[RMDB]
RNA sequence: GGGAACGACUCGAGUAGAGUCGAAAAGGUGAAUACGUCCCUGCUCCUUGCACACACCGCCCGUCAAAGCACCCGAGUGGGGUCCGGAUGAGGCCGUCAUGCGACGGUCGAAUCUGGGCUCUGCAAGCUCAGCAAGUUCUUUCGAGAACUUGCUGAGAAAAGAAACAACAACAACAAC
Reactivity to DMS in 0.01 (KOAc 150mM, MgCl2 10mM, bicine 150mM(pH8.5), 24C), signal-to-noise 1, nucleotides 027 to 126: g000g000u000g020a100a030u000a130c090g030u000c000c020c010u000g040c040u000c070c010u000u000g000c090a030c070a020c020a090c030c030g020c000c000c000g000u030c030a060a110a120g020c100a110c000c030c010g000a130g030u000g000g000g000g000u020c000c000g000g000a000u000g000a230g000g000c000c000g000u000c000a190u080g010c290g000a020c000g000g000u000c000g000a120a010u000c000u010g000g000g000c010u000c070u000g000c030a070a110g010
Reactivity to 2A3 in 0.01 (KOAc 150mM, MgCl2 10mM, bicine 150mM(pH8.5), 24C), signal-to-noise 4, nucleotides 027 to 126: g080g000u110g060a140a020u130a100c020g070u030c000c000c000u000g010c010u020c010c020u050u130g010c030a000c000a000c000a010c040c010g030c040c010c010g060u080c050a090a050a000g070c010a070c000c020c000g030a020g000u010g000g000g010g000u030c000c000g020g000a010u010g010a030g010g010c020c000g000u000c040a120u300g240c180g050a000c000g000g010u000c000g010a000a000u000c000u000g000g000g000c000u000c000u000g010c010a020a010g000